[RMDB]
RNA sequence: GGGAACGACUCGAGUAGAGUCGAAAAAAAAUGUGUGUGCAUGUGCAUUCAUGAAGUGGAGAGAAAUGAUAAAUGCUUUCAUUUGAGUCAGAGUCGUACACAUCACAGGCAGCUGCUGUGAGCGCUGGCGUGAUUAGUUGUUCGCAACUAAUCACGCAAAAGAAACAACAACAACAAC
Reactivity to DMS in 0.01 (KOAc 150mM, MgCl2 10mM, bicine 150mM(pH8.5), 24C), signal-to-noise 4, nucleotides 027 to 126: a040a030a020a020u000g010u000g010u010g010u000g010c080a070u040g000u040g000c080a040u000u010c050a050u010g010a040a070g000u020g000g000a070g020a070g000a030a050a040u020g000a080u020a030a060a080u050g010c060u010u000u010c040a070u010u000u010g010a150g000u000c030a100g000a070g000u010c030g000u010a060c060a040c060a050u000c040a050c050a060g000g000c050a030g000c030u030g030c020u010g020u000g010a040g020c060g000c030u000g000
Reactivity to 2A3 in 0.01 (KOAc 150mM, MgCl2 10mM, bicine 150mM(pH8.5), 24C), signal-to-noise 6, nucleotides 027 to 126: a000a000a000a010u050g040u010g000u010g000u000g020c050a040u050g050u080g070c010a050u010u030c030a020u110g060a080a040g070u050g060g040a050g000a010g040a070a080a060u130g070a050u090a100a130a050u100g030c000u020u070u070c010a100u030u050u120g070a030g030u030c030a010g000a010g070u060c040g020u050a010c020a000c000a040u060c020a010c000a010g150g000c020a030g000c050u120g010c010u060g030u070g170a060g050c050g000c030u040g020

Chemical mapping of a 177-nucleotide RNA with DMS and 2A3. For 2A3 the reverse transcriptase was SuperScript II with manganese. The RNA was probed in 150 mM KOAc, 10 mM MgCl2 and 150 mM bicine (pH 8.5) at 24 C. It was measured as part of the RMDB libraries RFM100 and RFMREP.